RNA sequence: GGGAACGACUCGAGUAGAGUCGAAAACAUAGCGUUUCACAAUGUGCGCCAUUAACAUUGUUUAUGCCAGCACGUUUCGCAAUGUACGGCGCAGAAACAUUGCCAACACAAAUACGCUUCACGAUGUAAAACAUCGGUGCGUUCGCGCACCGAUGAACUGCUAACUAACCUUCGGGUUAGUUAGCAGAAAAGAAACAACAACAACAAC
Reactivity to DMS in 0.01 (KOAc 150mM, MgCl2 10mM, bicine 150mM(pH8.5), 24C), signal-to-noise 1, nucleotides 027 to 156: c090a140u000a060g050c070g010u010u000u000c080a090c020a070a030u000g050u000g050c030g100c050c020a110u010u020a150a070c030a040u010u000g040u000u010u010a050u030g030c050c020a230g000c030a040c000g060u000u010u000c230g060c090a020a010u000g020u000a020c000g010g040c020g000c000a050g000a210a090a140c040a020u000u000g000c000c020a080a060c080a090c100a040a090a120u000a010c060g040c020u020u010c050a090c110g010a210u000g020u000a110a100a150a300c020a000u000c010g060g040u000g000c000g060u000u010c300g000c050g010c020a000c000c000g010a000u010g010a000a080
Reactivity to 2A3 in 0.01 (KOAc 150mM, MgCl2 10mM, bicine 150mM(pH8.5), 24C), signal-to-noise 3, nucleotides 027 to 156: c060a060u100a000g020c000g010u020u080u090c090a050c000a030a010u000g000u000g020c000g010c010c010a070u120u170a100a000c010a020u030u010g040u040u130u080a090u150g040c040c080a040g080c050a100c180g020u040u100u100c050g000c000a010a000u010g000u020a000c060g030g000c020g000c020a020g050a010a090a000c010a000u010u040g040c000c030a140a010c050a060c000a080a130a020u090a030c030g040c040u120u160c070a120c120g100a050u080g020u260a000a070a000a040c000a000u000c000g000g000u000g020c000g000u010u030c150g000c000g000c020a000c000c030g000a000u000g000a000a000